[RMDB]
RNA sequence: GGGAACGACUCGAGUAGAGUCGAAAAGCCGUAGCGUUUGCGACUUUAAUCAUCGCGGUGCUGUCGUUUCAUGAAAAAAAAUAAUCCACCCUUGAGUUAGCGGCUCAGGUGGAUUCGUCUAUCCUAUGAAAUAUCUGUGUUUCGACACAGAUAUUUCAAAAGAAACAACAACAACAAC
Reactivity to 2A3 in 0.01 (KOAc 150mM, MgCl2 10mM, bicine 150mM(pH8.5), 24C), signal-to-noise 8, nucleotides 027 to 126: g030c000c020g110u070a020g010c050g050u010u040u260g020c000g000a020c000u210u180u150a120a060u130c090a040u040c030g010c040g030g060u070g010c040u050g040u030c020g000u000u030u050c100a130u250g150a070a000a000a000a000a000a020a030u200a020a010u000c000c000a020c030c010c010u060u090g000a000g020u030u090a050g060c100g140g000c040u000c010a000g000g000u000g010g000a000u000u000c000g000u000c050u080a140u040c010c020u070a080u080
Reactivity to DMS in 0.01 (KOAc 150mM, MgCl2 10mM, bicine 150mM(pH8.5), 24C), signal-to-noise 3, nucleotides 027 to 126: g030c010c090g010u030a060g010c050g000u000u010u050g000c020g000a040c060u010u000u020a090a080u020c150a150u010c010g010c070g000g010u000g020c010u020g010u000c000g020u000u000u020c020a080u030g020a020a000a000a000a110a070a080a090u020a020a000u000c000c010a000c010c000c210u050u020g000a020g010u000u010a170g030c140g020g020c000u000c000a020g010g000u010g000g000a000u000u000c120g000u010c080u010a180u000c010c000u030a250u000
The record gives the reactivity of an RNA of 177 nucleotides to 2A3 and DMS. Conditions: 150 mM KOAc, 10 mM MgCl2 and 150 mM bicine (pH 8.5), 24 C. For 2A3 the reverse transcriptase was SuperScript II with manganese.